Structure probing data (2A3 and DMS) for a 177-nucleotide construct. DMS (dimethyl sulfate) methylates the pairing face of unpaired adenines and cytosines. The reactions ran in a buffer of 150 mM KOAc, 10 mM MgCl2 and 150 mM bicine (pH 8.5), at 24 C. For DMS the reverse transcriptase was MarathonRT. It was measured as part of the RMDB library RFMREP. For 2A3, 1,011 sequencing reads were counted. 2A3 adducts were read by reverse transcription with SuperScript II with manganese.
RNA sequence: GGGAACGACUCGAGUAGAGUCGAAAAGUUAGGAGGCAUAAAUCAAUCUUGAUCAUCAAUACUUUACUGUAUUGUAUUGAUCUAUUUGACUUGAGGUCUUUUUGAGGAGGAGCUUUGCUUCUGCUAAUCUAAAACAAGUCUUCGGACUUGUUUUAGAAAAAGAAACAACAACAACAAC
Reactivity to 2A3 in 0.01 (KOAc 150mM, MgCl2 10mM, bicine 150mM(pH8.5), 24C), signal-to-noise 1, nucleotides 027 to 126: g090u110u070a050g000g020a000g040g020c000a040u070a100a070a020u070c010a000a040u050c070u120u070g010a010u000c000a000u020c010a010a010u010a010c000u000u180u180a200c200u090g010u020a000u000u010g030u090a130u030u090g000a000u010c000u050a050u000u010u020g030a010c000u030u100g100a060g000g140u050c000u010u130u010u050u110g100a020g020g040a010g040g020a020g010c050u040u150u060g020c020u050u030c000u030g060c010u010a040a070
Reactivity to DMS in 0.01 (KOAc 150mM, MgCl2 10mM, bicine 150mM(pH8.5), 24C), signal-to-noise 2, nucleotides 027 to 126: g010u010u000a070g010g010a020g000g040c020a080u020a060a100a050u010c010a010a020u010c170u010u000g000a010u000c010a010u000c000a000a010u000a000c000u000u010u020a140c190u000g000u000a000u010u000g010u000a060u000u010g000a010u010c010u000a060u000u000u010g000a010c090u000u010g010a100g000g010u000c010u010u000u000u000u000g020a060g020g010a060g020g000a020g010c020u010u010u010g010c010u000u000c010u000g010c050u000a060a160